[RMDB]
RNA sequence: GGGAACGACUCGAGUAGAGUCGAAAAGGAAGACAACUCGCGGUCUUCCAAGUACUCGAAGGAAGGCGACGCACGAGUGCAGCGUCAAGAAUGACACCACGUCAUCCAACGCGAGAAGGUGUCAGAAGGGUUGGUGGUACUUCGGUACUACCAACCCAAAAGAAACAACAACAACAAC
Reactivity to 2A3 in 0.01 (KOAc 150mM, MgCl2 10mM, bicine 150mM(pH8.5), 24C), signal-to-noise 6, nucleotides 027 to 126: g010g010a000a010g000a000c010a090a050c030u000c010g010c000g000g000u000c000u010u000c000c000a010a000g030u030a040c020u020c090g070a100a060g140g050a060a030g090g030c040g030a020c010g030c010a050c080g080a090g110u170g040c100a030g010c020g020u020c020a020a030g110a050a080u050g000a000c010a000c010c010a050c110g100u050c050a080u060c070c050a110a020c030g010c000g000a010g000a030a070g010g000u010g000u000c000a010g070a070a080
Reactivity to DMS in 0.01 (KOAc 150mM, MgCl2 10mM, bicine 150mM(pH8.5), 24C), signal-to-noise 3, nucleotides 027 to 126: g000g000a040a010g000a020c030a090a050c000u020c010g030c000g000g000u000c000u000u020c000c000a030a070g030u010a060c030u030c010g020a130a080g040g030a060a150g010g010c080g000a010c040g000c050a090c120g000a100g000u000g000c130a120g030c000g030u000c040a190a150g010a140a090u000g000a000c000a040c030c050a150c190g020u100c110a060u050c050c100a070a170c050g000c000g000a020g000a260a150g000g000u000g000u000c020a040g000a130a090
Chemical mapping of a 177-nucleotide RNA with 2A3 and DMS. For DMS the reverse transcriptase was MarathonRT. The reactions ran in a buffer of 150 mM KOAc, 10 mM MgCl2 and 150 mM bicine (pH 8.5), at 24 C. Source: RMDB library OK1LIB, as collected in RNAgym. For 2A3 the reverse transcriptase was SuperScript II with manganese.